[RMDB]
RNA sequence: GGGAACGACUCGAGUAGAGUCGAAAAUUACACAGACAGUGAGGAUGUUGGCUUAGAAGCAGCCACCAUUUAAAAAAUGCGUAAUAGCUUACUCAUCGAGUGAUCCUGCGCCGAAAAUGAUUGGCGAAUUGAAAGCCCAAUUCGUUGGGCUUUCAAUAAAAGAAACAACAACAACAAC
Reactivity to DMS in 0.01 (KOAc 150mM, MgCl2 10mM, bicine 150mM(pH8.5), 24C), signal-to-noise 3, nucleotides 027 to 126: u010u000a050c000a060c040a040g010a200c240a080g010u020g010a190g000g010a030u000g000u000u010g000g000c000u000u000a090g020a150a150g000c300a030g010c010c000a000c030c000a030u020u000u020a010a010a020a070a070a060u010g000c030g020u000a000a000u040a100g010c150u010u000a030c020u000c010a090u000c000g020a020g000u000g000a090u000c010c010u010g010c010g000c010c000g000a010a060a060a100u110g010a110u000u000g000g000c020g010a060
Reactivity to 2A3 in 0.01 (KOAc 150mM, MgCl2 10mM, bicine 150mM(pH8.5), 24C), signal-to-noise 5, nucleotides 027 to 126: u010u020a010c040a010c000a010g200a120c010a040g110u070g120a080g090g010a020u000g000u030u010g000g000c020u070u040a090g060a300a030g100c070a010g000c020c000a000c000c010a010u030u030u080a060a140a040a020a000a010u040g010c020g000u000a000a010u010a030g020c020u000u020a010c000u000c010a030u020c010g010a000g000u020g030a060u010c010c000u030g020c030g010c000c030g080a030a040a050a080u170g050a100u030u070g000g000c000g010a000